[RMDB]
RNA sequence: GGGAACGACUCGAGUAGAGUCGAAAAGAAAGAAAGAAAAACUCGUCGUCACGAAAGUGACGGUAGGAAACUACCGACGAGGAACCACGGUACGAAAAGCGUGGAAGUACCUGAAAAGAAAAGAAAAGGGUAAGUGUUAGUUCGCUAACACUUACCCAAAAGAAACAACAACAACAAC
Reactivity to DMS in 0.01 (KOAc 150mM, MgCl2 10mM, bicine 150mM(pH8.5), 24C), signal-to-noise 1, nucleotides 027 to 126: g000a140a240a170g000a000a080a130g020a020a030a070a130a020c030u000c030g000u000c080g000u010c040a000c000g000a180a020a090g000u000g020a020c300g010g020u000a000g000g000a100a130a080c000u000a000c000c300g000a000c030g000a000g000g000a050a070c060c060a060c000g020g000u010a000c230g000a070a000a000a110g000c010g020u000g110g000a180a080g010u000a040c000c000u000g000a020a130a010a090g000a270a000a030a000g000a020a060a160a100
Reactivity to 2A3 in 0.01 (KOAc 150mM, MgCl2 10mM, bicine 150mM(pH8.5), 24C), signal-to-noise 1, nucleotides 027 to 126: g130a000a040a000g040a100a000a000g120a040a080a120a000a020c000u000c000g010u010c000g000u000c010a030c100g070a100a030a080g000u000g000a000c000g030g000u000a000g000g040a060a040a000c020u000a000c000c000g000a000c020g000a000g000g040a000a000c030c000a000c020g020g040u060a090c040g170a060a140a140a000g090c000g050u030g000g020a000a010g000u020a060c000c000u000g000a080a000a000a000g050a000a140a060a000g200a000a260a130a000